The data come from the RNA Mapping Database (RMDB), libraries RFM100 and RFMREP. Structure probing data (2A3 and DMS) for a 177-nucleotide construct. For 2A3 the reverse transcriptase was SuperScript II with manganese.
[RMDB]
RNA sequence: GGGAACGACUCGAGUAGAGUCGAAAAAACGAUGUCCUUGGAGAAAUAUGCGUCAAUGGAGUCCGUCUUCUUGAGAAGCAUUUUUGAGUGAGAAUGAUUCUCAUGAUGGAUAUGUCUUCAAGGACUUUUCUGGGUAUUAAUUCGUUAAUACCCAGAAAAAAGAAACAACAACAACAAC
Reactivity to 2A3 in 0.01 (KOAc 150mM, MgCl2 10mM, bicine 150mM(pH8.5), 24C), signal-to-noise 5, nucleotides 027 to 126: a000a000c130g040a110u140g000u000c000c000u000u010g000g000a000g000a010a050a000u040a010u030g130c010g000u000c030a050a130u090g020g000a000g020u030c060c050g050u020c030u030u010c000u030u040g010a020g000a050a020g120c080a170u020u000u010u030u060g130a110g020u200g000a000g020a030a000u010g010a010u010u000c050u010c020a020u010g000a000u010g060g070a000u000a000u010g070u020c000u000u000c010a010a000g010g000a000c000u000u000
Reactivity to DMS in 0.01 (KOAc 150mM, MgCl2 10mM, bicine 150mM(pH8.5), 24C), signal-to-noise 2, nucleotides 027 to 126: a090a050c110g000a130u020g020u000c000c000u000u000g010g000a010g000a010a040a020u000a000u000g000c000g020u000c010a060a050u020g010g010a010g000u000c120c130g010u010c000u000u000c010u000u000g000a010g000a010a080g000c090a030u000u000u000u000u000g010a090g010u010g000a010g010a030a010u030g000a010u000u000c000u000c050a180u010g020a010u000g000g000a010u000a000u000g000u000c010u000u000c000a020a010g010g020a000c000u000u010